[RMDB]
RNA sequence: GGGAACGACUCGAGUAGAGUCGAAAAAGUGAUCUCAAGAUCUGACCCUCUGGCCUACCAUGGGUUCUGUGAUAGAAUUAUUGAGGAUUACAUCAAAAGGUUGGGUCAUGAGGCCAUCAGGAAAGCCUCGUAUCUGGGAUUUCGAUCCCAGAUACGAAAAAGAAACAACAACAACAAC
Reactivity to 2A3 in 0.01 (KOAc 150mM, MgCl2 10mM, bicine 150mM(pH8.5), 24C), signal-to-noise 5, nucleotides 027 to 126: a010g240u140g070a110u010c030u020c080a010a050g020a090u030c000u000g010a030c010c000c000u010c010u010g030g010c010c010u010a020c020c020a100u080g000g040g000u030u010c020u040g300u160g060a060u090a070g170a080a260u300u060a090u050u150g040a030g020g010a020u040u170a200c020a070u130c060a020a120a040a020g070g000u130u130g040g000g000u010c000a020u160g000a000g000g000c010c000a010u030c010a000g050g040a090a100a010g030c010c040
Reactivity to DMS in 0.01 (KOAc 150mM, MgCl2 10mM, bicine 150mM(pH8.5), 24C), signal-to-noise 3, nucleotides 027 to 126: a070g010u020g000a140u000c010u000c010a140a100g010a090u040c020u020g000a030c150c000c030u010c050u000g000g000c000c000u000a040c010c030a150u020g000g000g000u000u000c020u000g030u050g020a050u040a020g010a070a020u020u000a050u000u010g020a080g000g000a100u000u000a090c070a100u030c080a030a050a080a050g000g020u030u020g010g010g000u000c000a100u000g000a000g000g000c010c190a250u000c030a070g020g000a140a100a060g030c050c040
Structure probing data (2A3 and DMS) for a 177-nucleotide construct. The reactions ran in a buffer of 150 mM KOAc, 10 mM MgCl2 and 150 mM bicine (pH 8.5), at 24 C. 2A3 adducts were read by reverse transcription with SuperScript II with manganese. For DMS, 3,967 sequencing reads were counted.